[RMDB]
RNA sequence: GGGAACGACUCGAGUAGAGUCGAAAAAGAAUGACGAUGUCCGUAUCUCCUUCGGUUUGCGUGGAAGGCCCCCAGCCCCGCGUCUGGCCGCUGCUAGGAGGCGGCGGUGCCAAGUGUCAGCGGUAGCAAGGGGAGCAAUAGCAACAGAUUCAGGCAAGACGAUUAGUACUUUCGAGUACUAAUCGUCAAAAGAAACAACAACAACAAC
Reactivity to 2A3 in 0.01 (KOAc 150mM, MgCl2 10mM, bicine 150mM(pH8.5), 24C), signal-to-noise 2, nucleotides 027 to 156: a000g100a040a030u100g020a030c040g060a050u040g050u100c050c050g030u090a090u060c080u040c000c000u060u080c030g090g000u060u040u060g030c050g050u080g090g010a060a060g060g000c000c000c000c000c000a010g000c030c000c000c000g000c010g000u000c000u010g020g000c000c040g020c020u000g010c000u030a190g020g230a100g080g020c030g000g050c030g000g040u080g060c030c000a180a030g050u050g030u130c050a010g000c010g030g000u040a020g010c040a090a180g030g000g000g000a060g010c000a030a010u030a050g030c010a010a050c020a030g030a040u030u130c060a020g070g040c050a080a030